[RMDB]
RNA sequence: GGGAACGACUCGAGUAGAGUCGAAAAAGAGAGUAUGGUAUGCAGUCUGGUGAAUUUGUCCUAGUAAACCUGAUUUUUAGCAUUACUUAAGACAUAAAUUCUCAAUCUCCAAGGAAUUAUUUUUAAACAUAUUAUUUUCACAAGUACCCGUGAAUGGACUAAGGUAAGAGUUCGCUCUUACCUUAGUAAAAGAAACAACAACAACAAC
Reactivity to 2A3 in 0.01 (KOAc 150mM, MgCl2 10mM, bicine 150mM(pH8.5), 24C), signal-to-noise 4, nucleotides 027 to 156: a010g100a000g010a010g000u060a040u090g020g010u050a020u040g030c040a000g000u040c020u040g020g000u040g040a060a040u060u110u200g070u020c000c030u050a050g030u090a060a030a050c000c010u010g030a070u020u000u040u070u290a020g020c010a010u020u070a030c010u070u090a060a010g060a020c000a040u100a050a180a040u120u020c020u000c000a010a090u040c030u000c060c020a010a050g020g010a050a050u100u050a080u030u240u080u200u300a200a210a030c020a010u300a120u210u160a090u110u230u070u100c080a050c020a070a080g090u170a150c020c090c080g030u060g050a020a130u080g090g040
Reactivity to DMS in 0.01 (KOAc 150mM, MgCl2 10mM, bicine 150mM(pH8.5), 24C), signal-to-noise 2, nucleotides 027 to 156: a090g010a130g020a080g010u000a050u000g020g040u000a050u000g020c030a080g000u000c050u020g030g000u000g000a070a110u000u000u000g000u000c000c020u000a090g000u000a020a060a100c050c030u000g010a110u000u010u020u000u010a080g020c040a210u000u000a030c040u000u000a020a090g010a030c020a070u000a060a050a070u000u000c000u000c020a030a070u010c050u000c020c020a100a160g000g010a060a070u000u000a100u030u000u000u020u020a100a040a160c000a070u000a100u000u000a110u000u000u000u000c020a060c040a080a110g020u020a100c020c000c030g000u000g000a070a100u000g020g040

Chemical mapping of a 207-nucleotide RNA with 2A3 and DMS. In probing experiments dimethyl sulfate is read out at A N1 and C N3, which are open when not base-paired. The reactions ran in a buffer of 150 mM KOAc, 10 mM MgCl2 and 150 mM bicine (pH 8.5), at 24 C. DMS adducts were read by reverse transcription with MarathonRT. The DMS profile rests on 3,265 reads.